[RMDB]
The record gives the reactivity of an RNA of 177 nucleotides to 2A3 and DMS. 2A3 adducts were read by reverse transcription with SuperScript II with manganese. Conditions: 150 mM KOAc, 10 mM MgCl2 and 150 mM bicine (pH 8.5), 24 C. For 2A3, 2,219 sequencing reads were counted.
RNA sequence: GGGAACGACUCGAGUAGAGUCGAAAAAACGCACCAGCGGAAACAGUUGAUCGACACCGUUGAUGUCGCGAUAUCGCACCUCGGUCACCGCGGUAACGUCGUUCCACAGCCUGAGGCGAUGCGACAGCAGACAUUUGGUGUUCGCACCAAAUGUCUGAAAAGAAACAACAACAACAAC
Reactivity to 2A3 in 0.01 (KOAc 150mM, MgCl2 10mM, bicine 150mM(pH8.5), 24C), signal-to-noise 2, nucleotides 027 to 126: a000a000c060g000c020a010c040c000a020g020c010g010g070a060a080a030c060a100g030u100u110g200a180u160c060g000a000c000a000c100c040g030u010u060g070a160u080g040u030c050g020c010g050a080u050a020u150c010g000c020a050c020c000u010c000g030g020u090c040a040c110c030g020c080g010g050u050a070a070c080g010u020c020g020u030u020c000c000a060c010a030g020c010c050u120g020a020g050g090c020g010a020u070g060c000g020a000c020a040g090
Reactivity to DMS in 0.01 (KOAc 150mM, MgCl2 10mM, bicine 150mM(pH8.5), 24C), signal-to-noise 4, nucleotides 027 to 126: a070a080c050g000c080a030c070c020a050g010c000g010g000a180a060a080c130a110g000u010u000g010a070u020c080g000a100c120a110c080c080g030u000u020g000a120u010g030u000c020g010c020g020a090u010a090u000c010g000c060a130c090c020u000c020g000g010u000c060a100c100c030g010c060g000g020u000a090a080c140g000u000c030g000u000u000c010c010a060c140a180g020c040c010u020g000a050g000g010c090g010a060u000g010c060g010a060c130a090g010